The data come from the RNA Mapping Database (RMDB), library M2PK50. An RNA of 177 nucleotides, treated with DMS and 2A3 and read out base by base. For DMS, 5,914 sequencing reads were counted. Conditions: 150 mM KOAc, 10 mM MgCl2 and 150 mM bicine (pH 8.5), 24 C.

[RMDB]
RNA sequence: GGGAACGACUCGAGUAGAGUCGAAAACUCGGUUAAUUCGUUAACCGAGACUACUUAAACAUCUUUUCAACACAUAGAUGGUAAAUAUUCAAAGAUGUUCGAAUGCGAUAAACUUCGGUUUAUCGAAGAUAACCAUCUGUUUCGACAGAUGGUUAUCAAAAGAAACAACAACAACAAC
Reactivity to DMS in 0.01 (KOAc 150mM, MgCl2 10mM, bicine 150mM(pH8.5), 24C), signal-to-noise 5, nucleotides 027 to 126: c000u000c000g020g000u000u000a010a010u000u000c210g020u000u000a010a000c000c000g000a010g010a090c060u000a060c060u000u000a110a070a040c010a000u000c000u010u000u000u010c110a070a050c100a070c110a130u010a100g010a080u000g000g010u000a070a090a150u010a100u020u000c150a030a030a030g010a020u000g000u000u000c150g010a090a080u000g000c000g010a000u000a000a010a010c000u000u010c240g020g000u010u000u000a000u000c000g010a040a050
Reactivity to 2A3 in 0.01 (KOAc 150mM, MgCl2 10mM, bicine 150mM(pH8.5), 24C), signal-to-noise 4, nucleotides 027 to 126: c000u000c000g000g000u020u010a020a020u070u070c130g030u040u010a000a000c000c000g000a000g000a000c010u050a010c000u050u170a060a040a010c000a010u000c000u040u040u070u100c110a100a060c040a020c030a190u180a140g120a210u070g050g010u060a050a110a050u210a090u110u090c030a040a000a000g020a020u020g030u030u050c070g110a170a080u200g060c000g000a000u000a010a010a000c010u020u040c130g050g000u000u010u000a000u000c000g000a030a020